[RMDB]
RNA sequence: GGGAACGACUCGAGUAGAGUCGAAAAUAAGAAAAAUAAACAAGUGGUGGUAGUCCGCCACUCUAAGGGGACGCCUUUAGAAGAAGAGGCUAGGUGGUAUUCCGGUGUGAGAUACUUGGUAAUAUGUAAGGGGAUGGUACGUUCGCGUACCAUCCAAGUGGAAUAACGUCUUCGGACGUUAUUCCACAAAAGAAACAACAACAACAAC
Reactivity to 2A3 in 0.01 (KOAc 150mM, MgCl2 10mM, bicine 150mM(pH8.5), 24C), signal-to-noise 2, nucleotides 027 to 156: u160a010a040g050a030a090a030a000a000u210a050a120a110c150a260a100g000u000g040g000u000g000g140u070a040g010u030c010c010g000c020c000a020c000u000c000u020a010a000g040g020g000g020a060c030g090c010c000u050u040u080a060g000a110a000g010a030a000g050a030g010g000c010u020a010g060g070u050g040g080u080a030u040u120c040c030g000g010u030g000u010g010a080g010a020u050a070c010u070u100g020g000u020a100a000u080a090u230g120u070a000a070g080g030g000g000a000u000g000g000u000a000c000g030u030u060c200g000c020g090u000a000c000c000a000u000c000c010a010a040